[RMDB]
RNA sequence: GGGAACGACUCGAGUAGAGUCGAAAAAGGCCCGGCGAAACGCGGGCCUGUCUCCUAAGAUGCCUCCGCUAGUCGAGCGGACUUGGCCUCUUCCGCCCGAGGACCUUUUCUUUCUAAUCUUGCUUGUUCCAACGAGCCCCGCGAGUGGAAUCCCCGGCUACAAACAAGACUUCGGUCUUGUUUGUAGAAAAGAAACAACAACAACAAC
Reactivity to 2A3 in 0.01 (KOAc 150mM, MgCl2 10mM, bicine 150mM(pH8.5), 24C), signal-to-noise 1, nucleotides 027 to 156: a010g000g000c010c040c080g180g090c120g100a300a140a030c130g000c020g060g000g010c010c000u000g000u040c050u020c000c010u080a010a070g000a010u040g000c010c030u010c020c000g020c010u040a050g180u230c060g030a000g040c000g000g000a030c030u080u130g040g000c000c010u020c000u070u010c060c050g050c010c000c060g040a020g010g060a120c000c000u120u080u090u100c010u130u170u080c040u060a140a120u020c040u080u080g060c010u030u050g050u170u020c030c000a060a080c030g000a020g020c020c020c040c030g020c050g040a010g040u090g000g000a010a060u070c010c030c050c000g010g010